[RMDB]
RNA sequence: GGGAACGACUCGAGUAGAGUCGAAAAGGUGAUCUCAACCGAUGUUUCGGACAGCGGUUCGAUUCCGCUCAACUCCACUUUUUGGGGUUGUAAUGGUUUCGACGGGGCAUAAGGAAGGUGACUGAAGAAGCUCUCAACAGUUCGCUGUUGAGAGCUUAAAAGAAACAACAACAACAAC
Reactivity to DMS in 0.01 (KOAc 150mM, MgCl2 10mM, bicine 150mM(pH8.5), 24C), signal-to-noise 3, nucleotides 027 to 126: g040g040u000g000a060u000c030u000c010a160a110c000c010g020a020u000g010u000u000u000c040g000g000a110c140a030g020c010g010g020u010u000c020g000a300u000u000c000c020g010c070u010c000a000a000c000u000c000c000a090c300u010u000u000u030u000g000g000g030g000u000u000g020u000a020a020u030g000g000u000u000u000c090g030a060c090g010g000g000g010c060a040u000a090a080g000g050a150a020g000g030u000g000a070c060u000g030a080a100g000
The data come from the RNA Mapping Database (RMDB), libraries RFM100 and RFMREP. The record gives the reactivity of an RNA of 177 nucleotides to DMS.